[RMDB]
RNA sequence: GGGAACGACUCGAGUAGAGUCGAAAAGAAAGCGUGUAGCUGUAUCGCCGAGAAGGCAUCUCGCGGGUCUGCGUGGCCGCAUCGGAACCUCCUGCGGUCCUUCGCGAUACGGUUCCGGUCGGGGUGAAGUAGGUCCAUAGUUCGCUAUGGACCUACUAAAAGAAACAACAACAACAAC
Reactivity to 2A3 in 0.01 (KOAc 150mM, MgCl2 10mM, bicine 150mM(pH8.5), 24C), signal-to-noise 1, nucleotides 027 to 126: g080a010a040a020g110c060g040u140g020u150a030g050c030u020g020u090a030u070c050g020c090c060g090a080g010a110a050g010g000c050a060u050c120u010c030g040c010g040g000g060u040c060u050g070c020g070u060g060g050c000c000g010c070a090u100c040g010g030a020a020c010c020u070c010c030u050g020c010g080g000u120c000c030u190u160c000g030c020g000a020u000a050c030g050g020u030u000c000c020g030g020u010c030g070g000g030g000u010g030a050
Reactivity to DMS in 0.01 (KOAc 150mM, MgCl2 10mM, bicine 150mM(pH8.5), 24C), signal-to-noise 3, nucleotides 027 to 126: g000a110a090a100g000c040g020u000g010u010a100g020c010u000g000u010a040u000c040g030c040c250g020a140g010a090a080g010g010c160a100u000c040u000c030g020c080g010g020g020u000c070u000g020c090g030u000g010g000c020c030g020c170a040u000c060g000g000a100a040c040c030u000c120c080u000g010c030g000g010u020c080c070u000u010c070g010c010g000a060u010a040c050g030g000u000u000c020c000g020g000u000c040g000g000g000g000u000g000a080